[RMDB]
RNA sequence: GGGAACGACUCGAGUAGAGUCGAAAAGGCGACAAGUUCGCUUGUCGCCACGGGGUCCAGCCUGGAAAGGCUGGAGGUAUUGGAAUGGUCGGGCGGCCAUUCAACGCGGGACAUUCGUGUCCCGCAACCUAAAUUUUCUAUUCGUAGAAAAUUUAGGAAAAGAAACAACAACAACAAC
Reactivity to 2A3 in 0.01 (KOAc 150mM, MgCl2 10mM, bicine 150mM(pH8.5), 24C), signal-to-noise 3, nucleotides 027 to 126: g000g010c010g000a000c000a000a000g010u020u080c180g050c080u000u000g000u010c000g000c000c000a010c020g030g020g000g010u010c010c000a010g000c000c000u060g090g170a200a120a010g010g000c000u000g010g040a000g050g010u140a150u120u300g100g020a010a000u010g000g050u050c100g110g110g130c120g030g010c000c000a010u010u010c010a020a000c100g000c000g020g000g000a010c010a020u050u060c190g070u050g000u020c020c020c000g000c000a000a000
Reactivity to DMS in 0.01 (KOAc 150mM, MgCl2 10mM, bicine 150mM(pH8.5), 24C), signal-to-noise 2, nucleotides 027 to 126: g000g020c000g000a000c000a010a020g020u000u010c190g010c000u000u000g000u010c010g000c010c000a020c070g000g010g010g010u010c000c000a010g000c000c000u010g000g020a130a150a020g000g000c000u000g000g020a000g010g020u000a080u010u000g000g010a020a010u000g010g000u000c010g010g000g010c170g020g000c000c000a010u000u000c030a080a060c180g020c010g020g000g010a010c000a050u000u030c140g020u000g020u010c000c000c000g040c000a000a010

Conditions: 150 mM KOAc, 10 mM MgCl2 and 150 mM bicine (pH 8.5), 24 C. The record gives the reactivity of an RNA of 177 nucleotides to 2A3 and DMS. DMS (dimethyl sulfate) methylates the pairing face of unpaired adenines and cytosines. For 2A3 the reverse transcriptase was SuperScript II with manganese. For DMS, 3,521 sequencing reads were counted.